[RMDB]
This 207-nucleotide RNA was probed chemically with 2A3 and DMS.
Reactivities are given for positions 27 through 156.
Source: RMDB library OK3TST, as collected in RNAgym.
For 2A3, 791 sequencing reads were counted.
RNA sequence: GGGAACGACUCGAGUAGAGUCGAAAAGAUGAAAGACUAGCAAAGUGUGUUAAAUAUUACAAUUUCAUAGAGCAAGAAAAUCGUGGCACAAGAUAAGCACCCCUUAUUUUCCUGUGAUAUAUGUGAAACAAACUGUUCUACUGCUCAAAAUGCCAAGAGCUCAAUCUGAAUUCGUUCAGAUUGAGCUAAAAGAAACAACAACAACAAC
Reactivity to 2A3 in 0.01 (KOAc 150mM, MgCl2 10mM, bicine 150mM(pH8.5), 24C), signal-to-noise 2, nucleotides 027 to 156: g040a000u030g050a060a060a000g020a050c060u080a020g000c070a100a060a000g030u090g000u010g000u100u140a020a050a090u120a070u110u090a030c030a070a080u060u110u000c060a100u150a060g030a020g030c040a020a020g020a060a050a010a070u080c030g000u050g000g000c010a000c010a080a040g000a080u050a010a010g050c060a080c010c010c000c010u010u020a050u040u100u010u040c020c030u040g060u070g000a010u060a000u010a010u110g070u050g110a040a070a040c050a040a040a000c020u000g000u010u020c000u030a100c030u000g020c000u040c030a030a110a030a030u080g010c140c010a050a020g300
Reactivity to DMS in 0.01 (KOAc 150mM, MgCl2 10mM, bicine 150mM(pH8.5), 24C), signal-to-noise 1, nucleotides 027 to 156: g010a110u000g020a100a120a070g010a180c060u000a100g140c070a050a080a110g000u000g010u000g000u000u020a060a110a130u030a060u000u000a190c070a090a110u000u000u010c020a030u000a090g010a300g050c080a060a170g000a100a040a020a030u020c150g010u000g040g000c040a100c010a030a280g000a080u000a080a190g000c000a020c040c030c070c000u000u000a100u000u000u000u000c000c030u000g000u000g010a160u000a070u000a030u010g060u020g010a090a040a010c070a030a110a140c060u000g030u000u000c000u000a060c000u000g070c020u000c020a040a090a040a130u010g000c000c000a040a180g000
The DMS profile rests on 1,398 reads.